[RMDB]
RNA sequence: GGGAACGACUCGAGUAGAGUCGAAAAGUACCACGCGCAGGACGUCGUUGUGUCCGGAUGGUCGGGGAUGCACGAGCUCGAGACCGCUUCCGCGGAUAUCGAUGCGUUGUUCGCCGAUGGCGAGAUCGUUAGGCAUUAAGUUCGCUUAAUGCCUAACAAAAGAAACAACAACAACAAC
Reactivity to DMS in 0.01 (KOAc 150mM, MgCl2 10mM, bicine 150mM(pH8.5), 24C), signal-to-noise 9, nucleotides 027 to 126: g000u000a160c020c010a140c100g010c050g010c060a120g010g010a060c080g020u000c120g010u000u010g040u000g010u000c010c010g010g010a120u000g010g010u000c040g010g000g010g010a050u010g010c050a050c060g010a120g010c050u000c000g010a030g010a250c020c000g010c020u010u010c270c220g010c010g000g010a070u000a130u000c010g010a050u010g020c020g010u000u010g010u000u000c010g020c010c010g000a100u000g020g010c010g010a070g010a070u010c140
Reactivity to 2A3 in 0.01 (KOAc 150mM, MgCl2 10mM, bicine 150mM(pH8.5), 24C), signal-to-noise 9, nucleotides 027 to 126: g010u030a020c000c010a010c030g030c010g000c030a040g060g110a100c040g090u070c020g040u090u100g020u030g020u020c020c010g020g050a130u160g040g060u060c040g020g020g020g010a010u040g010c020a010c040g030a030g040c020u020c020g020a030g020a040c010c010g020c020u300u080c090c130g010c020g020g000a070u090a020u300c020g010a020u090g020c020g030u040u140g050u060u030c030g010c030c020g210a190u190g020g000c030g000a030g010a090u140c090
This 177-nucleotide RNA was probed chemically with DMS and 2A3. The DMS profile rests on 25,362 reads. Source: RMDB library OK2TRN, as collected in RNAgym. Values cover nucleotides 27 to 126.